[RMDB]
RNA sequence: GGGAACGACUCGAGUAGAGUCGAAAAUCUACAAUGUACGUCAAUGUGUACGACAGAACACGCUUCUACCGUUAGGUGGAACCCACAACAAAUUCUCUAUGAUCUAACCAAAUCAUCGACAAGAUUUAAUAUUUUUGAUGGUUUUUCACCGUGUAUGGUGAUUCGUACAUUUCGAUGUACGAAUCACAAAAGAAACAACAACAACAAC
Reactivity to DMS in 0.01 (KOAc 150mM, MgCl2 10mM, bicine 150mM(pH8.5), 24C), signal-to-noise 1, nucleotides 027 to 156: u000c060u000a080c080a090a150u000g030u000a010c040g050u000c040a150a070u020g030u010g000u000a070c020g010a200c100a080g000a150a110c050a110c080g030c050u000u010c050u000a080c000c010g000u000u000a080g060g050u000g020g020a020a010c300c000c060a080c060a020a090c080a070a130a080u010u020c030u000c010u000a070u000g000a130u000c010u000a130a150c080c060a030a030a040u000c020a000u020c080g010a090c030a080a150g000a210u000u000u000a080a240u000a040u010u000u000u000u030g010a010u000g010g020u000u000u000u000u000c000a070c030c020g040u000g010u010a080u030g000
Reactivity to 2A3 in 0.01 (KOAc 150mM, MgCl2 10mM, bicine 150mM(pH8.5), 24C), signal-to-noise 5, nucleotides 027 to 156: u050c030u070a100c070a070a120u160g030u050a060c020g010u020c090a100a150u140g060u030g020u130a050c050g050a060c080a040g100a100a030c070a020c130g040c080u080u050c000u080a070c050c020g070u080u150a050g010g000u000g010g010a010a010c000c010c010a030c020a060a040c020a010a070a030u100u030c030u000c010u050a010u030g000a000u010c020u050a030a090c060c010a010a090a080u020c020a010u010c000g030a030c070a110a040g030a050u080u150u120a150a160u090a140u090u090u030u030u030g160a200u040g020g030u050u000u000u100u170c020a020c000c030g030u050g050u090a120u150g110

Source: RMDB library OK3TST, as collected in RNAgym. The record gives the reactivity of an RNA of 207 nucleotides to DMS and 2A3. For 2A3, 2,356 sequencing reads were counted. The reactions ran in a buffer of 150 mM KOAc, 10 mM MgCl2 and 150 mM bicine (pH 8.5), at 24 C.